[RMDB]
Annotation: Chemical mapping of a 177-nucleotide RNA with DMS and 2A3. It was measured as part of the RMDB library OK1LIB. The RNA was probed in 150 mM KOAc, 10 mM MgCl2 and 150 mM bicine (pH 8.5) at 24 C. For DMS, 3,944 sequencing reads were counted. DMS adducts were read by reverse transcription with MarathonRT.
RNA sequence: GGGAACGACUCGAGUAGAGUCGAAAAUGCCUCUCUUUUCUGCAUGUUGAUACUUUUGAGAGCAUCAGCCAGGACAUUCAUGAGCACCAUUGUGGCAAUGCGGAAAGAUGGCGGAAAGAGAAUGGGAAGUCGAUUUACGAUUCGUCGUAAAUCGACUAAAAGAAACAACAACAACAAC
Reactivity to DMS in 0.01 (KOAc 150mM, MgCl2 10mM, bicine 150mM(pH8.5), 24C), signal-to-noise 3, nucleotides 027 to 126: u050g020c020c000u000c020u000c000u030u000u020u020c010u040g000c000a070u010g000u000u000g000a060u030a090c030u000u000u030u000g010a220g020a090g020c010a010u000c100a130g000c000c040a130g010g060a150c100a100u020u030c150a100u020g000a120g000c110a070c040c110a160u050u040g010u000g030g000c090a210a020u000g020c050g010g000a050a030a020g000a100u010g000g000c010g020g010a030a030a010g000a040g000a030a100u020g010g010g020a100
Reactivity to 2A3 in 0.01 (KOAc 150mM, MgCl2 10mM, bicine 150mM(pH8.5), 24C), signal-to-noise 5, nucleotides 027 to 126: u200g050c010c000u000c010u010c000u070u040u130u010c050u140g020c010a060u060g070u120u110g110a100u160a260c030u100u070u140u170g230a180g010a020g070c000a050u030c040a020g000c020c020a050g060g000a120c060a090u150u100c030a040u290g090a040g040c070a060c100c020a060u050u250g100u070g040g020c020a010a040u000g000c000g020g020a040a010a000g060a010u020g040g000c000g020g000a040a050a000g060a000g010a070a070u110g060g000g070a050